[RMDB]
RNA sequence: GGGAACGACUCGAGUAGAGUCGAAAACACAAUCACCAACUACAUAGACGUUACGAUAUGUUGGUACUUGAUGAUACUGGUUAACUAUCACGCGUCCAUUACUAUUUAUAUCAAUCGGCAAGUUACGCAAGACCUCUAACUUCGGUUAGAGGUCUUGAAAAGAAACAACAACAACAAC
Reactivity to DMS in 0.01 (KOAc 150mM, MgCl2 10mM, bicine 150mM(pH8.5), 24C), signal-to-noise 3, nucleotides 027 to 126: c040a080c190a120a070u010c080a040c060c040a050a050c070u030a050c100a200u030a040g000a100c110g000u020u020a210c200g000a050u020a010u000g050u000u000g000g010u000a020c010u000u010g000a080u060g000a110u030a110c060u000g000g080u010u000a010a060c150u010a040u020c020a150c160g000c020g030u000c010c050a090u020u000a080c050u000a090u000u010u010a070u010a060u030c040a040a090u010c040g060g020c060a050a080g000u000u000a060c100g030
Reactivity to 2A3 in 0.01 (KOAc 150mM, MgCl2 10mM, bicine 150mM(pH8.5), 24C), signal-to-noise 4, nucleotides 027 to 126: c040a000c020a010a080u140c070a070c030c000a030a090c000u080a040c120a130u170a060g200a090c040g050u090u060a080c140g010a060u020a010u220g020u010u030g060g000u030a090c030u090u110g020a020u160g020a110u200a170c060u040g030g040u090u110a030a030c000u040a000u160c010a010c040g000c000g010u040c020c000a020u080u030a000c030u110a100u070u290u070a150u060a090u230c090a090a070u040c000g070g000c070a080a060g000u060u000a020c060g000
Conditions: 150 mM KOAc, 10 mM MgCl2 and 150 mM bicine (pH 8.5), 24 C. The record gives the reactivity of an RNA of 177 nucleotides to DMS and 2A3. Reactivities are given for positions 27 through 126. For DMS the reverse transcriptase was MarathonRT. Source: RMDB library OK1LIB, as collected in RNAgym.